Structure probing data (2A3) for a 207-nucleotide construct. It was measured as part of the RMDB library OK3TST. For 2A3, 1,398 sequencing reads were counted. For 2A3 the reverse transcriptase was SuperScript II with manganese.
[RMDB]
RNA sequence: GGGAACGACUCGAGUAGAGUCGAAAAACAUGUAGCUUAAUCGUUUCACCUUUUGUGAUGACCAUUACCUGAAUCAGUUAUUUCAUUAGAUUGCAAGAUUAUGCUUUUCUGAUUUUAUCAUUUCUUCUGUAUUGACUGUAAUUCUUUGGUAUAGAAGCCGACUUUAAUCUUUCGAGAUUAAAGUCGGAAAAGAAACAACAACAACAAC
Reactivity to 2A3 in 0.01 (KOAc 150mM, MgCl2 10mM, bicine 150mM(pH8.5), 24C), signal-to-noise 3, nucleotides 027 to 156: a000c100a080u160g030u130a010g010c040u070u120a050a030u080c030g070u020u040u030c040a080c010c000u070u090u110u150g020u040g040a070u070g040a030c010c040a110u020u130a060c050c040u050g070a050a030u150c010a000g010u010u060a070u040u100u000c040a010u020u030a020g020a060u050u070g000c040a070a060g010a120u090u150a060u170g040c000u130u070u110u050c060u040g080a110u020u060u050u140a130u100c060a060u020u110u010c020u060u030c010u020g030u050a030u030u060g060a040c030u010g030u110a110a070u150u080c040u090u100u090g000g010u090a030u090a110g090a080a010g080